[RMDB]
RNA sequence: GGGAACGACUCGAGUAGAGUCGAAAAUUCAUAGUGUAAGGAGAGCGGGAACUGGAAAACGCCUCGCUUUUUUCCUGUAAAACACCGCAACGCAGGAAAAGCGCAUGCUUAUCGGGACAACAACCCACAUCGAUUUAAUGUUCGCAUUAAAUCGAUGAAAAGAAACAACAACAACAAC
Reactivity to DMS in 0.01 (KOAc 150mM, MgCl2 10mM, bicine 150mM(pH8.5), 24C), signal-to-noise 2, nucleotides 027 to 126: u010u010c050a050u010a060g030u000g000u000a080a000g000g010a050g000a040g020c030g020g000g030a070a220c180u000g020g000a070a060a120a080c180g010c300c050u000c030g000c020u000u000u010u000u010u000c000c000u000g020u000a070a080a090a070c090a060c070c050g040c070a120a060c150g000c020a070g000g010a050a050a000a030g020c070g000c150a030u010g010c030u000u000a080u000c050g000g000g000a060c030a020a050c100a040a100c010c010c020a180
Reactivity to 2A3 in 0.01 (KOAc 150mM, MgCl2 10mM, bicine 150mM(pH8.5), 24C), signal-to-noise 1, nucleotides 027 to 126: u040u030c010a020u100a090g090u050g000u070a070a030g080g020a020g030a000g040c010g000g050g050a030a060c030u030g040g010a180a040a030a000c020g020c000c010u050c010g040c000u150u060u020u010u110u010c000c000u000g000u010a010a020a070a080c050a040c020c030g000c050a000a070c030g030c010a010g010g000a040a030a010a020g000c030g000c030a030u110g000c010u070u010a050u160c060g030g000g000a030c010a090a000c000a000a060c030c010c010a030